[RMDB]
RNA sequence: GGGAACGACUCGAGUAGAGUCGAAAACGUUUGGCAAUGUAUAUCCAGGGCGUAGAUAGCGUUUAUGACCUGAUUUGGUGUGACGGCCCACUGGGUACAACCACCUACGGCGAUAUUUAUCAUCAAAGCAGAUUACUCAUUUCGAUGAGUAAUCUGCAAAAGAAACAACAACAACAAC
Reactivity to DMS in 0.01 (KOAc 150mM, MgCl2 10mM, bicine 150mM(pH8.5), 24C), signal-to-noise 2, nucleotides 027 to 126: c080g040u000u000u000g000g070c070a050a070u000g010u000a070u000a070u030c080c010a030g000g000g030c050g030u000a020g000a060u020a070g000c080g010u000u000u000a050u030g000a050c070c010u000g000a140u000u000u000g000g040u000g000u020g000a140c200g000g010c030c000c040a140c190u010g000g000g020u020a010c110a060a170c190c070a050c060c020u000a000c150g010g000c080g020a070u000a060u000u010u000a100u000c040a110u000c060a050a040a100
Reactivity to 2A3 in 0.01 (KOAc 150mM, MgCl2 10mM, bicine 150mM(pH8.5), 24C), signal-to-noise 1, nucleotides 027 to 126: c010g000u040u040u100g020g000c060a050a050u010g050u080a070u080a020u130c010c000a000g040g020g050c000g010u020a060g070a170u080a060g050c040g020u030u040u060a080u040g170a060c000c040u080g090a220u160u030u140g000g040u010g000u030g040a000c000g060g000c010c010c010a090c080u100g000g000g000u060a130c020a140a180c000c000a000c000c020u030a050c080g070g000c030g040a010u030a030u090u120u110a150u090c040a000u110c040a060a040a040
The record gives the reactivity of an RNA of 177 nucleotides to DMS and 2A3. It was measured as part of the RMDB library OK2TST.